Source: RMDB library OK2TST, as collected in RNAgym. Chemical mapping of a 177-nucleotide RNA with DMS and 2A3. For DMS the reverse transcriptase was MarathonRT.
RNA sequence: GGGAACGACUCGAGUAGAGUCGAAAACAAAAAGAAGGUCAGCUAGCCGCUCGAAAUGUGAGUGCAAUUCUGCCAACUUGAGGCUCUUGAACAAAUUAACUUGAAGGUGGGUAAGGGCUACUUUCCGGUGGCUUCAAUAAUUCGUUAUUGAAGCCACAAAAGAAACAACAACAACAAC
Reactivity to DMS in 0.01 (KOAc 150mM, MgCl2 10mM, bicine 150mM(pH8.5), 24C), signal-to-noise 1, nucleotides 027 to 126: c070a070a060a060a110a070g020a050a200g000g010u000c060a040g000c180u020a080g000c140c030g040c000u000c010g000a050a130a120u030g010u010g020a020g000u020g000c040a080a110u030u020c040u000g040c010c000a050a170c030u010u020g000a070g010g000c040u000c050u010u000g000a100a070c100a020a030a090u000u010a040a060c170u010u000g000a150a060g000g030u000g010g010g000u000a030a040g000g010g000c010u000a080c100u000u000u020c040c030g080
Reactivity to 2A3 in 0.01 (KOAc 150mM, MgCl2 10mM, bicine 150mM(pH8.5), 24C), signal-to-noise 1, nucleotides 027 to 126: c030a000a130a040a030a030g070a060a010g000g010u180c020a010g000c070u050a010g060c090c000g000c010u040c010g240a110a120a140u180g110u100g000a040g010u040g050c000a030a080u150u000c000u000g030c010c000a020a040c020u070u060g050a020g010g070c020u000c000u080u130g050a100a020c010a030a200a160u120u180a080a070c030u040u070g060a080a010g030g060u060g000g040g040u040a030a020g120g000g000c050u050a080c020u030u000u010c000c000g060
Conditions: 150 mM KOAc, 10 mM MgCl2 and 150 mM bicine (pH 8.5), 24 C.